[RMDB]
This 177-nucleotide RNA was probed chemically with DMS and 2A3. It was measured as part of the RMDB library M2PK50. For DMS the reverse transcriptase was MarathonRT. Conditions: 150 mM KOAc, 10 mM MgCl2 and 150 mM bicine (pH 8.5), 24 C.
RNA sequence: GGGAACGACUCGAGUAGAGUCGAAAAAUGGUGACCUUCGGGUCACCAUGGUGCGUAGCUGCGUUAAUUUAAUAGCUACGCUUAAUAAAUUUAUUUAACGCAAUGGAGCCUGCUUCGGCAGGCUCAAAUUAUCACCUAGUUUCGACUAGGUGAUAAUAAAAGAAACAACAACAACAAC
Reactivity to DMS in 0.01 (KOAc 150mM, MgCl2 10mM, bicine 150mM(pH8.5), 24C), signal-to-noise 4, nucleotides 027 to 126: a020u000g010g010u000g000a010c000c000u010u020c200g020g010g010u000c000a000c000c000a000u000g010g020u010g000c000g020u000a010g000c010u000g010c000g000u000u000a020a030u010u000u000a070a070u010a050g000c000u000a000c000g010c000u000u000a030a060u000a060a090a100u000u000u010a050u010u000u000a010a010c010g010c020a240a140u020g010g000a020g000c010c010u000g010c000u000u010c220g020g010c000a000g010g010c010u010c000a000a030
Reactivity to 2A3 in 0.01 (KOAc 150mM, MgCl2 10mM, bicine 150mM(pH8.5), 24C), signal-to-noise 2, nucleotides 027 to 126: a010u010g010g000u010g000a000c000c000u010u030c250g060g010g000u000c000a000c000c000a020u000g000g010u060g000c010g000u000a000g000c000u030g000c010g010u000u010a050a040u090u130u180a240a250u270a060g000c000u010a000c000g000c000u000u050a030a020u050a000a040a020u090u150u110a080u010u070u000a030a010c000g020c010a030a050u130g100g010a010g000c010c020u000g000c000u070u040c180g070g000c010a000g000g010c000u010c000a000a000